[RMDB]
RNA sequence: GGGAACGACUCGAGUAGAGUCGAAAAGCGAAAAUCGGACGGUGGCUGCAAGUCGCAUCGCAAAACCGCGGCAAGUGGAGCUAGCGAGAGGAGGCUGGGUUUUGGCUUCCUUAAGCAAUCGGUCACCAUAAGAGGAUUCGCUUCGGCGAAUCCUCAAGUUAUACAUUAUGUUCGCAUAAUGUAUAACAAAAGAAACAACAACAACAAC
Reactivity to DMS in 0.01 (KOAc 150mM, MgCl2 10mM, bicine 150mM(pH8.5), 24C), signal-to-noise 3, nucleotides 027 to 156: g020c030g010a070a060a080a080u000c060g010g010a090c060g010g030u000g030g040c000u010g030c090a060a130g010u000c020g010c050a130u010c020g000c020a040a100a130a200c040c100g030c000g040g010c050a100a190g020u000g000g000a200g020c060u000a170g010c010g030a300g020a040g020g030a050g010g010c000u000g030g030g050u020u010u020u000g030g010c020u000u000c020c010u000u000a010a300g000c040a080a090u000c010g020g020u000c000a020c010c020a110u000a120a130g000a020g030g020a030u000u000c000g060c000u010u000c280g020g010c020g010a010a020u000c000c000u000c000a000a040
Reactivity to 2A3 in 0.01 (KOAc 150mM, MgCl2 10mM, bicine 150mM(pH8.5), 24C), signal-to-noise 6, nucleotides 027 to 156: g060c030g050a050a020a010a100u170c080g060g040a040c060g020g000u010g010g010c010u030g020c050a080a060g030u030c020g010c030a060u090c030g020c090a060a080a030a060c050c050g010c010g060g040c120a140a080g020u050g050g050a050g030c030u060a030g000c040g010a020g000a000g020g000a000g020g000c020u070g100g130g100u060u100u170u300g020g000c000u000u000c000c000u000u010a020a020g000c000a010a030u070c030g010g000u000c000a000c000c000a010u060a080a050g010a000g010g000a000u000u000c010g000c000u030u020c090g070g000c000g000a000a000u000c000c000u000c000a000a000